[RMDB]
RNA sequence: GGGAACGACUCGAGUAGAGUCGAAAACCUGUAAUCCAAGCUACUGGGAGGCUGAGGCUGGCGGACCGCUUGAGCUCAGGGGUUCUGGGCUGCAGUGGACUAUGCCGAUCGGGUGUCCGCACUAAGUUCGGUAUCGAUAUGGUGCUCCUGGGGGAGCCUCCUCCCAUCACUUCGGUGAUGGGAGGAGAAAAGAAACAACAACAACAAC
Reactivity to 2A3 in 0.01 (KOAc 150mM, MgCl2 10mM, bicine 150mM(pH8.5), 24C), signal-to-noise 1, nucleotides 027 to 156: c000c020u050g030u170a060a080u020c030c020a040a070g010c020u050a040c020u090g000g000g030a030g030g000c040u030g000a010g080g000c030u030g080g040c020g000g020a010c000c020g040c030u050u150g160a000g020c000u000c000a050g000g000g100g060u180u280c060u070g010g010g010c010u090g000c000a010g030u000g030g000a020c030u040a020u080g010c010c000g020a030u060c020g000g000g000u040g020u000c030c030g130c000a030c050u140a210a070g020u040u010c000g000g060u020a030u000c010g000a300u300a130u180g050g000u050g100c000u000c000c020u040g000g000g090g010g000a020g010c000
This 207-nucleotide RNA was probed chemically with 2A3. 2A3 is a SHAPE reagent: it acylates the 2'-hydroxyl of flexible nucleotides of all four kinds. The reactions ran in a buffer of 150 mM KOAc, 10 mM MgCl2 and 150 mM bicine (pH 8.5), at 24 C.